[RMDB]
RNA sequence: GGGAACGACUCGAGUAGAGUCGAAAAGAGUGGGCUUGAUUCUAGAGGGCUGCAGACACACGCAGAAAGUUACUAUUAUAGAAUGUUUGCUUCUCGAAUGUCUUUGCUUGCCACAGUCUCUAAAGGGAGUGAGAAGACUGUCAGUGGUGAGUGGAGAUACCUAUUACGUAUUCGUACGUAAUAGGUAAAAAGAAACAACAACAACAAC
Reactivity to DMS in 0.01 (KOAc 150mM, MgCl2 10mM, bicine 150mM(pH8.5), 24C), signal-to-noise 4, nucleotides 027 to 156: g010a060g030u000g010g020g020c040u010u010g000a090u000u010c050u000a100g010a170g020g010g020c020u000g010c040a110g030a090c060a110c050a120c090g000c030a120g010a070a050a110g010u000u000a070c050u000a120u000u010a170u010a110g030a120a090u010g010u000u000u000g010c030u000u000c010u000c010g010a110a120u000g010u010c000u000u000u000g010c020u000u000g000c000c010a080c010a040g020u010c010u010c020u000a070a040a100g000g000g000a100g030u010g010a210g010a090a030g010a050c000u010g010u010c100a160g020u000g000g030u010g010a010g030u000g010g000a040g000a080
Reactivity to 2A3 in 0.01 (KOAc 150mM, MgCl2 10mM, bicine 150mM(pH8.5), 24C), signal-to-noise 9, nucleotides 027 to 156: g050a010g020u090g010g020g010c040u070u070g030a060u120u020c040u070a030g020a070g060g040g000c030u020g020c020a010g080a030c040a010c020a020c110g020c020a010g070a070a100a010g050u090u080a070c040u040a070u300u040a090u080a100g110a150a060u080g060u050u080u050g020c000u030u030c020u010c040g070a150a110u150g020u010c000u020u020u010g010c000u010u020g000c000c000a010c000a010g010u000c010u000c020u060a080a120a060g090g030g010a080g030u130g040a040g020a090a030g010a010c010u050g060u210c130a090g020u010g020g000u010g000a010g000u020g010g000a000g000a000

Source: RMDB library OK3TST, as collected in RNAgym. An RNA of 207 nucleotides, treated with DMS and 2A3 and read out base by base. The reactions ran in a buffer of 150 mM KOAc, 10 mM MgCl2 and 150 mM bicine (pH 8.5), at 24 C. Reactivities are given for positions 27 through 156.